[RMDB]
Source: RMDB library RNAMAK, as collected in RNAgym. The record gives the reactivity of an RNA of 207 nucleotides to 2A3.
RNA sequence: GGGAACGACUCGAGUAGAGUCGAAAACCAGGCUUCGGCCUGGACACUAACCUUUGUGAAGAUCCCACUGGGAGACCGUCACGUCCCAUUGGGACGAAGUCGGUCGAGGAUCAGUGAGCGAUCUUCACUCUGGUACCGCAUCCCCUUCGGGGGAUAAUGCGUAGUCGAUAUUCGUAUCGACUACGCAAAAAGAAACAACAACAACAAC
Reactivity to 2A3 in 0.01 (KOAc 150mM, MgCl2 10mM, bicine 150mM(pH8.5), 24C), signal-to-noise 2, nucleotides 027 to 156: c000c000a010g020g010c050u100u120c300g160g000c000c000u000g040g010a030c100a030c100u210a060a060c000c000u000u000u000g010u000g000a000a000g000a000u000c010c010c000a010c000u040g000g000g000a030g000a000c000c000g000u010c000a030c050g010u010c080c010c040a280u200u300g020g010g020a000c010g020a130a010g040u030c000g010g000u010c010g010a080g010g000a020u000c010a000g000u000g060a120g040c190g030a010u010c000u000u010c000a000c000u010c000u010g000g010u020a110c000c030g050c030a030u020c020c000c020c050u020u150c270g080g000g010g000g030a040u090a020a120

2A3 adducts were read by reverse transcription with SuperScript II with manganese.